[RMDB]
Source: RMDB library OK2TRN, as collected in RNAgym. Chemical mapping of a 177-nucleotide RNA with 2A3 and DMS.
RNA sequence: GGGAACGACUCGAGUAGAGUCGAAAAGAUCAAUUAUGAUUGCAAUGUAAUAUGUCAAGGCAGACAUAUCUAGCUGUCGCCUUAGCUAGAGAUAGCCGGUUUAUUGCUUUCAUAAGAACGGCGAGAAAGCAUUAAUGGACUUCGGUCCAUUAAUGCUAAAAGAAACAACAACAACAAC
Reactivity to 2A3 in 0.01 (KOAc 150mM, MgCl2 10mM, bicine 150mM(pH8.5), 24C), signal-to-noise 2, nucleotides 027 to 126: g020a050u090c020a040a090u040u010a000u020g000a020u020u050g010c020a010a010u060g050u270a160a070u110a140u220g140u180c080a070a060g050g000c030a030g010a150c000a040u080a040u030c020u010a030g030c010u020g040u080c000g010c010c000u020u030a000g000c000u000a000g010a000g030a050u070a080g010c010c000g020g050u080u040u050a000u020u000g030c000u000u000u040c000a000u020a030a010g020a070a000c020g030g020c030g000a040g100a150a100
Reactivity to DMS in 0.01 (KOAc 150mM, MgCl2 10mM, bicine 150mM(pH8.5), 24C), signal-to-noise 2, nucleotides 027 to 126: g000a100u000c080a100a140u010u000a010u000g000a030u000u000g010c010a020a040u000g000u000a060a090u010a080u000g020u000c100a060a080g010g030c070a080g020a080c070a030u000a090u000c030u020a020g000c060u000g000u000c040g000c040c040u000u000a050g030c000u000a010g010a070g000a140u000a070g020c010c040g020g010u000u000u000a010u000u000g000c000u000u010u000c010a010u000a020a030g010a070a050c150g010g020c040g030a160g000a080a140